This 177-nucleotide RNA was probed chemically with 2A3 and DMS. Values are in units of 0.01, from 0 to 300, in steps of 10. DMS adducts were read by reverse transcription with MarathonRT. The RNA was probed in 150 mM KOAc, 10 mM MgCl2 and 150 mM bicine (pH 8.5) at 24 C. 2A3 adducts were read by reverse transcription with SuperScript II with manganese. It was measured as part of the RMDB library TTRDES. The DMS profile rests on 1,185 reads.
RNA sequence: GGGAACGACUCGAGUAGAGUCGAAAAGAUAUGGAAAUCCAUAGCAACAGCAAUGACGUCGGAAACGACGUAUUGACAUGCUAGGAUUUCCUAAGUCAAAAGUCACACAAGUUCGCUUGUGUGACAACCUCUAAUCGGGGUUCGCCCCGAUUAGAGGAAAAGAAACAACAACAACAAC
Reactivity to 2A3 in 0.01 (KOAc 150mM, MgCl2 10mM, bicine 150mM(pH8.5), 24C), signal-to-noise 2, nucleotides 027 to 126: g000a020u020a020u070g010g020a020a000a010u000c030c040a300u060a010g010c060a050a300c130a300g020c020a000a030u120g300a210c020g010u000c000g000g000a020a000a000c000g010a010c000g000u000a000u010u010g020a040c140a180u300g000c000u000a000g000g030a010u010u010u000c000c000u000a010a000g000u000c000a050a020a050a150g000u010c000a010c010a000c010a000a030g020u070u160c280g120c190u000u000g000u020g010u020g000a000c010a020a000
Reactivity to DMS in 0.01 (KOAc 150mM, MgCl2 10mM, bicine 150mM(pH8.5), 24C), signal-to-noise 1, nucleotides 027 to 126: g000a010u000a090u000g000g000a030a000a000u000c000c010a120u000a000g010c000a150a180c230a270g030c000a010a000u010g010a040c030g050u000c000g000g000a010a030a040c000g030a010c000g010u000a010u000u000g020a080c080a040u000g000c000u000a000g000g000a000u000u000u000c000c000u000a010a040g010u000c000a070a150a130a150g000u000c000a000c000a000c000a000a010g000u000u020c280g010c010u000u000g020u000g000u000g000a000c000a010a020